[RMDB]
RNA sequence: GGGAACGACUCGAGUAGAGUCGAAAAGGUCGGUGUUUCGACACCGACCACUUACCGAGAAUGUUCCUCGGUAUAUUAAACAAACCCUUGGAAACAAGGGAAUACGAAUCGUGUUCGCACGAUUCAAUCCCAUGUCAUAGUUCGCUAUGACAUGGGAAAAAGAAACAACAACAACAAC
Reactivity to DMS in 0.01 (KOAc 150mM, MgCl2 10mM, bicine 150mM(pH8.5), 24C), signal-to-noise 3, nucleotides 027 to 126: g000g010u000c010g000g020u000g010u000u000u010c160g030a070c000a010c010c000g010a000c000c000a010c050u000u000a030c010c000g000a030g010a150a110u000g000u000u010c100c010u000c020g000g000u000a020u010a070u010u010a070a140a160c110a120a100a090c000c000c010u000u000g000g010a190a090a230c010a010a020g030g000g000a050a010u000a120c170g010a010a000u000c000g000u000g000u010u010c220g050c000a000c000g010a000u000u000c000a070a150
Reactivity to 2A3 in 0.01 (KOAc 150mM, MgCl2 10mM, bicine 150mM(pH8.5), 24C), signal-to-noise 3, nucleotides 027 to 126: g000g000u010c000g000g000u010g030u010u080u120c210g030a000c000a010c010c000g020a000c000c000a000c000u000u010a010c000c020g000a000g030a070a180u250g040u160u120c000c010u000c000g000g050u010a010u000a020u030u160a040a050a020c070a030a090a100c000c000c000u010u020g010g010a060a020a010c010a010a010g010g000g040a000a020u060a040c050g000a010a010u000c000g010u000g030u040u080c250g020c120a000c000g010a000u010u020c000a010a030
Background
Chemical mapping of a 177-nucleotide RNA with DMS and 2A3. Reactivities are given for positions 27 through 126. For DMS the reverse transcriptase was MarathonRT. It was measured as part of the RMDB library M2PK50.